RNA sequence: GGGAACGACUCGAGUAGAGUCGAAAAGACGCUGGGUUCUGUGGAUAUAGAGGUACAGCCCGUACUGAAGCGCGCACGGUACGUAACUGUACUACCCACCUAUAUCGUAACAUCAGAACCUGUGCUGAAGCGCGCACGGCAACCGAAAGGUGCGGAACGUGUAUAAGCGGUUCGCCGCUUAUACACGAAAAGAAACAACAACAACAAC
Reactivity to 2A3 in 0.01 (KOAc 150mM, MgCl2 10mM, bicine 150mM(pH8.5), 24C), signal-to-noise 3, nucleotides 027 to 156: g100a010c010g000c000u020g000g000g000u000u000c000u010g010u010g020g000a000u000a000u000a000g010a020g010g000u010a010c010a000g040c110c120c000g000u000a000c010u040g060a190a030g020c000g000c000g000c010a000c010g020g000u000a000c000g120u180a090a040c010u000g000u000a000c010u030a030c040c070c010a040c000c000u010a010u000a000u010c010g020u030a010a040c050a260u300c010a070g000a000a000c000c010u000g010u000g000c010u060g010a130a040g000c000g000c000g000c010a010c000g010g010c000a000a020c000c000g030a070a030a050g020g000u020g000c010g030g000a110a080
Reactivity to DMS in 0.01 (KOAc 150mM, MgCl2 10mM, bicine 150mM(pH8.5), 24C), signal-to-noise 2, nucleotides 027 to 156: g010a120c020g040c010u010g010g000g010u000u000c020u020g040u000g010g030a040u000a030u010a000g010a190g010g010u000a010c030a000g060c010c170c010g050u000a000c000u000g020a040a050g010c000g040c020g000c010a300c010g000g080u010a010c010g020u000a050a120c010u010g020u000a010c000u000a030c000c020c070a300c090c010u000a000u000a040u010c030g030u010a040a040c100a120u000c000a020g010a040a040c010c000u000g020u000g010c000u010g020a070a040g030c010g030c000g020c020a300c050g000g000c050a030a050c030c010g000a110a070a120g000g020u000g000c010g000g000a080a200
Structure probing data (2A3 and DMS) for a 207-nucleotide construct.
The reactions ran in a buffer of 150 mM KOAc, 10 mM MgCl2 and 150 mM bicine (pH 8.5), at 24 C.
For 2A3 the reverse transcriptase was SuperScript II with manganese.
It was measured as part of the RMDB library RNAMAK.
The 2A3 profile rests on 5,090 reads.